This 177-nucleotide RNA was probed chemically with DMS.

[RMDB]
RNA sequence: GGGAACGACUCGAGUAGAGUCGAAAACAGGAUAUGGUGGAGGAAUGAACGCAGCAAAAGCUGCUUUAGAAAGUGAUACAAAACUGCUCGCUUGGGAAGCAGGAAGAAAAUGGGGCGUCCGUGUAAACGUUGGAGAACUCUUCGGAGUUCUCCAACGAAAAGAAACAACAACAACAAC
Reactivity to DMS in 0.01 (KOAc 150mM, MgCl2 10mM, bicine 150mM(pH8.5), 24C), signal-to-noise 1, nucleotides 027 to 126: c060a080g000g020a160u000a110u000g060g100u000g010g010a050g020g000a120a150u020g010a050a100c250g030c050a010g020c010a020a060a080a130g010c000u010g000c030u000u000u000a100g020a080a110a100g030u010g010a090u000a150c150a080a070a070a070c060u000g000c110u000c030g060c130u000u000g010g010g000a050a120g000c030a060g030g020a050a030g030a050a010a100a140u000g040g000g000g000c020g000u000c100c080g000u000g030u000a010a110a080